An RNA of 177 nucleotides, treated with 2A3 and DMS and read out base by base. For DMS, 11,731 sequencing reads were counted. For 2A3, 1,475 sequencing reads were counted. Conditions: 150 mM KOAc, 10 mM MgCl2 and 150 mM bicine (pH 8.5), 24 C. It was measured as part of the RMDB library OK1LIB.
RNA sequence: GGGAACGACUCGAGUAGAGUCGAAAAGCGCGCGUGUAUCUCCUUGGUGUGAGUGUGUAGAUAUGUGUUUUGUUUUGGGCGGUGAGGGGUGUGUGCCUGUAAAUAGAAUAGGUGUCGGAGGCGCGCGGGAUAUAUAUAUAUUCGUAUAUAUAUAUCCAAAAGAAACAACAACAACAAC
Reactivity to 2A3 in 0.01 (KOAc 150mM, MgCl2 10mM, bicine 150mM(pH8.5), 24C), signal-to-noise 2, nucleotides 027 to 126: g000c030g020c000g000c000g040u070g010u010a060u010c000u010c000c010u020u040g020g000u040g020u030g030a030g000u060g010u010g020u040a030g030a030u030a040u110g060u000g000u010u000u080u030g070u000u010u060u090g020g010g020c040g000g020u170g030a050g000g010g000g010u010g000u020g030u050g020c000c020u010g010u060a030a040a060u100a030g040a060a020u030a060g020g020u010g030u030c000g000g010a000g020g000c000g000c000g000c010g000
Reactivity to DMS in 0.01 (KOAc 150mM, MgCl2 10mM, bicine 150mM(pH8.5), 24C), signal-to-noise 3, nucleotides 027 to 126: g000c020g020c030g010c020g010u020g020u020a050u010c020u000c010c030u000u020g000g030u010g010u030g000a080g000u010g010u010g010u020a050g000a090u020a050u020g020u000g010u010u020u000u010g000u000u000u010u010g000g000g010c080g000g010u010g000a080g000g010g010g020u000g000u010g010u010g010c000c000u000g010u010a040a080a120u030a080g000a080a060u000a040g010g000u000g000u020c080g010g010a060g000g010c010g010c010g020c010g000